[RMDB]
RNA sequence: GGGAACGACUCGAGUAGAGUCGAAAAUUCUAGACAAGCAGGGUAACAUACUUGGGUUCCAUGUGGCAGGGAAUGCGCGACUUCGGCAGGGAUAUGUUGCACCUAUUUUUAGGGAACUUAUUCCCGAGGACAUUCCUAGAUUCGUCUAGGAAUGUCCAAAAGAAACAACAACAACAAC
Reactivity to 2A3 in 0.01 (KOAc 150mM, MgCl2 10mM, bicine 150mM(pH8.5), 24C), signal-to-noise 1, nucleotides 027 to 126: u020u000c010u010a020g020a070c060a060a020g060c000a000g010g000g060u110a080a010c010a040u060a030c040u030u030g040g000g090u130u060c030c000a030u090g000u060g090g000c040a020g070g030g050a100a120u120g050c030g030c030g070a050c050u090u060c090g030g000c020a030g040g000g000a030u010a010u100g130u050u010g080c070a290c060c000u010a110u070u100u010u070u030a030g010g020g000a010a010c020u010u050a040u100u060c010c040c020g000a030
Reactivity to DMS in 0.01 (KOAc 150mM, MgCl2 10mM, bicine 150mM(pH8.5), 24C), signal-to-noise 2, nucleotides 027 to 126: u000u000c010u000a110g000a120c080a070a090g000c080a050g000g020g000u000a040a070c070a050u000a020c130u000u000g010g010g010u000u000c050c070a100u000g020u010g010g000c050a100g010g000g000a110a040u010g010c080g020c060g000a040c090u010u000c060g020g030c160a120g010g000g010a090u000a020u000g000u000u010g000c060a130c030c010u000a040u000u000u000u000u010a040g040g010g010a070a030c080u000u000a200u000u000c000c000c030g000a140